[RMDB]
RNA sequence: GGGAACGACUCGAGUAGAGUCGAAAACUAAUGCUCAACCUGCUGAUUCUUCACGUCCCUACGCUGUUUUUUCACAAGAAGAGAAUGGUGAACAUGUAAAUUUAAAGGCUUUCCCUGAUCACACUCUUCGCGUUAAAGAUUCCAAACCUGAAUCACACCCUACCGGUAAUUUCGAUUACCGGUAGGGAAAAGAAACAACAACAACAAC
Reactivity to 2A3 in 0.01 (KOAc 150mM, MgCl2 10mM, bicine 150mM(pH8.5), 24C), signal-to-noise 2, nucleotides 027 to 156: c010u030a090a060u100g000c020u010c150a040a010c050c000u040g000c060u020g020a170u020u090c000u060u030c030a050c100g080u080c050c010c000u010a020c070g020c020u040g190u010u030u030u000u130u120c080a050c050a120a070g020a010a000g000a010g010a090a220u070g230g000u030g050a060a000c020a060u110g020u110a000a070a110u070u080u100a170a180a000g060g010c030u040u070u060c020c000c000u040g050a100u060c010a010c010a020c070u020c000u000u000c040g020c000g020u010u030a130a060a020g070a040u050u110c050c030a000a100a040c070c170u140g020a010a040u280c260a010c010a010